[RMDB]
RNA sequence: GGGAACGACUCGAGUAGAGUCGAAAAGAUAUGGAGCGUCGCGUCGCAGGCUCCAGGCACGUUUGACGGCUUCGGAAACGAAGCCCGAGUGCCUGGAGCCUGAACUACGACCUGACGCUCCUAAGUCGGACGUACAUAAGUUCGCUUAUGUACGUCCAAAAGAAACAACAACAACAAC
Reactivity to DMS in 0.01 (KOAc 150mM, MgCl2 10mM, bicine 150mM(pH8.5), 24C), signal-to-noise 1, nucleotides 027 to 126: g040a120u050a300u000g000g000a030g050c000g040u000c010g010c300g000u010c040g000c000a030g000g010c000u000c000c000a000g010g010c000a050c000g010u000u000u010g030a300c300g000g000c000u000u010c000g040g000a270a110a250c000g030a010a000g000c020c000c010g030a020g000u000g000c000c010u000g010g000a010g010c000c000u000g010a000a040c130u010a300c000g020a010c000c030u010g010a020c010g000c010u000c000c000u000a000a080g010u000c130